[RMDB]
RNA sequence: GGGAACGACUCGAGUAGAGUCGAAAAGAUAUGGAUAGAAGAGGCGAAGAACUAUAAGAUCAUGAGCCAUGUUAUCGGAAACGAUAACAUGGCUCAUUCCCUUAUAGGGAGCCUCCUAUCCUAAGUCCUAUCUUUCAAUCUUCGGAUUGAAAGAUAGAAAAGAAACAACAACAACAAC
Reactivity to DMS in 0.01 (KOAc 150mM, MgCl2 10mM, bicine 150mM(pH8.5), 24C), signal-to-noise 2, nucleotides 027 to 126: g010a100u010a300u010g000g010a040u000a000g000a180a100g020a020g010g020c000g000a100a170g000a160a240c010u010a020u010a000a040g000a100u000c190a050u010g000a010g010c000c000a010u010g000u020u000a000u010c000g000g010a090a110a240c000g020a020u010a010a000c000a000u000g000g010c000u000c010a000u000u000c160c130c000u000u010a000u000a010g010g000g020a050g020c010c000u010c000c010u000a000u000c000c000u010a040a070g000u000c060